[RMDB]
RNA sequence: GGGAACGACUCGAGUAGAGUCGAAAACAUUAAGGAGCAACUAUGUCUCUCGACCUGACGCUACUGCGUCUGAUGAAACAUCGCACCAAGUUCGACCGGCUCAUCGGUGGACUGCCGGACGCUGGUCUUGAGGAGACAACGACCGUACUCCUCAACGAUUCUUUUGGGCUUUCGAGCCCAAAAGAAUAAAAGAAACAACAACAACAAC
Reactivity to 2A3 in 0.01 (KOAc 150mM, MgCl2 10mM, bicine 150mM(pH8.5), 24C), signal-to-noise 1, nucleotides 027 to 156: c060a000u280u300a050a100g060g000a070g010c020a000a000c040u110a190u230g090u020c000u000c000u000c070g080a110c010c010u010g030a000c000g030c020u160a200c190u300g000c000g100u070c010u000g030a090u150g000a010a050a000c020a080u030c060g070c040a060c050c010a080a000g040u140u050c010g010a000c000c000g000g000c010u010c010a240u080c050g000g000u070g180g110a100c240u140g010c020c020g000g000a060c040g000c000u000g000g000u000c040u000u040g000a040g040g010a000g010a060c080a030a030c110g160a110c110c110g020u070a120c000u000c000c000u050c000a000a100c030g020